[RMDB]
RNA sequence: GGGAACGACUCGAGUAGAGUCGAAAAGAUAUGGACUGAGGGAGAGAUUGGUUCGGAAACGAACCAAUCUCUUUGAUCUCACAUGUCCUAAGUCAAAGAUCUCAACUAGUUCGCUAGUUGAGAUCAACAUGAGGGCAAUCUUCGGAUUGCCCUCAUGAAAAGAAACAACAACAACAAC
Reactivity to DMS in 0.01 (KOAc 150mM, MgCl2 10mM, bicine 150mM(pH8.5), 24C), signal-to-noise 1, nucleotides 027 to 126: g000a080u010a300u020g000g000a020c050u000g000a030g000g010g000a020g000a000g010a020u000u000g030g000u010u000c000g000g000a090a050a180c000g000a000a000c000c000a020a010u000c000u000c000u000u020u020g000a070u010c000u000c000a240c280a050u010g000u000c000c000u000a080a120g000u000c070a060a110a110g000a000u000c010u000c000a010a010c000u000a000g020u000u020c240g040c010u000a000g000u000u010g000a000g010a010u000c000a050a100